The record gives the reactivity of an RNA of 207 nucleotides to 2A3 and DMS. The reactions ran in a buffer of 150 mM KOAc, 10 mM MgCl2 and 150 mM bicine (pH 8.5), at 24 C.

RNA sequence: GGGAACGACUCGAGUAGAGUCGAAAACGGAAGCAUUAAAACCAUUCGAGCUAGUCAAUGCGUGGCGUGUCUCUCCGCAGCGUGUUGGCGGAUGUAAAGAGUGACUAAGCAUGUAGUACCGAGGAUGAUAAGAGCAAUUCGUUCGCGAAUUGCUCAACACUAGUACAGGGUUCGCCCUGUACUAGUGAAAAGAAACAACAACAACAAC
Reactivity to 2A3 in 0.01 (KOAc 150mM, MgCl2 10mM, bicine 150mM(pH8.5), 24C), signal-to-noise 7, nucleotides 027 to 156: c030g030g030a050a030g030c040a040u060u110a070a020a040a060c030c010a030u060u070c060g020a030g050c050u080a030g060u020c010a020a010u010g010c010g010u030g040g000c030g010u100g090u050c040u020c020u020c110c000g000c000a010g000c010g000u020g010u020u010g010g020c000g000g020a020u040g040u080a060a080a020g040a020g020u050g020a030c040u050a060a000g050c020a040u060g030u080a060g030u030a050c030c020g000a040g080g010a040u090g020a020u110a230a130g000a000g000c000a000a000u000u000c000g020u030u050c130g010c000g140a000a000u000u000g000c000u000c000a000a000
Reactivity to DMS in 0.01 (KOAc 150mM, MgCl2 10mM, bicine 150mM(pH8.5), 24C), signal-to-noise 3, nucleotides 027 to 156: c030g020g010a210a140g030c050a120u000u000a060a080a090a120c050c040a130u000u000c020g000a190g010c030u010a100g020u010c030a030a050u010g000c040g030u010g010g050c040g010u000g020u000c090u010c040u000c170c000g010c070a060g000c030g040u000g020u000u010g000g010c000g000g000a070u000g030u000a070a070a130g010a120g030u000g010a050c040u010a090a150g020c060a040u000g020u000a070g010u000a080c030c010g000a100g020g010a120u000g000a130u000a050a130g000a030g000c000a010a020u000u000c000g010u000u000c280g030c040g020a030a030u010u000g000c000u000c000a010a070

The data come from the RNA Mapping Database (RMDB), library M2RFPK.